Background: Chemical mapping of a 177-nucleotide RNA with DMS and 2A3. Values cover nucleotides 27 to 126. Conditions: 150 mM KOAc, 10 mM MgCl2 and 150 mM bicine (pH 8.5), 24 C. For DMS the reverse transcriptase was MarathonRT. The DMS profile rests on 2,587 reads. 2A3 adducts were read by reverse transcription with SuperScript II with manganese.
RNA sequence: GGGAACGACUCGAGUAGAGUCGAAAAACAACACGCUUCGGCGUGUUGUCGACGGAGGAAGCUGAGGACGCGCUUGUGCCGCAGCAGGGUAGCGCAGCGUAAAUCAGAGGUGAUUCGUCACCUCUAACGGAUGUACACUGUUCGCAGUGUACAUCCGAAAAGAAACAACAACAACAAC
Reactivity to DMS in 0.01 (KOAc 150mM, MgCl2 10mM, bicine 150mM(pH8.5), 24C), signal-to-noise 3, nucleotides 027 to 126: a010c000a000a010c000a000c020g000c010u000u010c210g050g020c020g030u000g030u000u000g000u000c080g000a110c050g010g000a120g000g000a080a080g010c060u000g010a090g000g010a170c120g020c030g030c030u000u010g010u010g010c010c040g000c060a100g010c060a080g010g010g020u000a050g030c060g030c070a020g010c060g000u010a020a100a070u010c140a020g000a010g010g020u010g000a070u000u010c170g010u000c000a050c010c000u000c010u020a030a100
Reactivity to 2A3 in 0.01 (KOAc 150mM, MgCl2 10mM, bicine 150mM(pH8.5), 24C), signal-to-noise 2, nucleotides 027 to 126: a000c010a000a000c000a000c000g010c000u030u090c240g140g010c000g020u000g000u000u010g010u010c040g010a040c060g020g030a050g070g040a100a010g010c020u020g020a030g040g040a030c050g060c010g000c060u080u150g060u080g050c060c020g000c020a020g000c030a030g000g070g020u050a020g010c010g000c030a000g020c000g030u100a040a040a070u130c080a040g000a010g020g010u030g020a040u030u050c170g030u020c040a010c010c000u010c000u010a040a000